Background: Chemical mapping of a 207-nucleotide RNA with DMS and 2A3. Values cover nucleotides 27 to 156. The reactions ran in a buffer of 150 mM KOAc, 10 mM MgCl2 and 150 mM bicine (pH 8.5), at 24 C.
RNA sequence: GGGAACGACUCGAGUAGAGUCGAAAAGAAGGCAAGGAGGAGCAAGCCACAUCUUACAUGGAUGGCAGCAGACAGACAGGGAGAGAGAGCUUGUGCAGGGGAACUCCUCUUUUUAAAACCAUCAGAUCUCGUUAGACUUAUUCACUAUCAAGAGAACCAUUUCAUAAGAGUUCGCUCUUAUGAAAUGAAAAGAAACAACAACAACAAC
Reactivity to DMS in 0.01 (KOAc 150mM, MgCl2 10mM, bicine 150mM(pH8.5), 24C), signal-to-noise 2, nucleotides 027 to 156: g020a150a040g030g020c070a080a090g010g020a100g010g020a060g050c050a050a100g030c000c040a070c030a090u010c040u000u000a130c140a100u010g020g010a060u030g000g000c100a170g030c020a060g020a130c060a140g010a150c090a060g000g020g020a100g010a140g010a180g030a080g000c000u000u020g040u000g030c070a100g050g010g010g010a090a040c020u010c010c010u000c020u010u000u000u000u010a030a090a050a100c000c030a100u000c040a090g020a050u000c040u000c030g010u010u000a080g000a090c070u000u000a140u000u010c100a110c050u000a040u000c040a050a130g010a040g000a070a140c230
Reactivity to 2A3 in 0.01 (KOAc 150mM, MgCl2 10mM, bicine 150mM(pH8.5), 24C), signal-to-noise 5, nucleotides 027 to 156: g050a030a020g020g000c030a020a030g010g010a010g010g000a020g020c030a040a010g020c030c010a060c020a110u080c050u160u210a140c090a130u170g030g020a030u020g010g040c010a020g010c010a020g050a090c000a010g030a020c020a020g020g020g010a030g000a000g000a000g000a020g030c020u080u070g030u080g040c030a030g000g020g000g010a010a010c000u020c000c010u050c000u050u040u010u040u120a070a110a030a030c040c000a030u090c040a030g040a140u010c020u010c040g030u020u050a020g020a080c020u100u070a060u260u150c050a040c080u080a090u140c060a110a010g040a000g010a060a000c010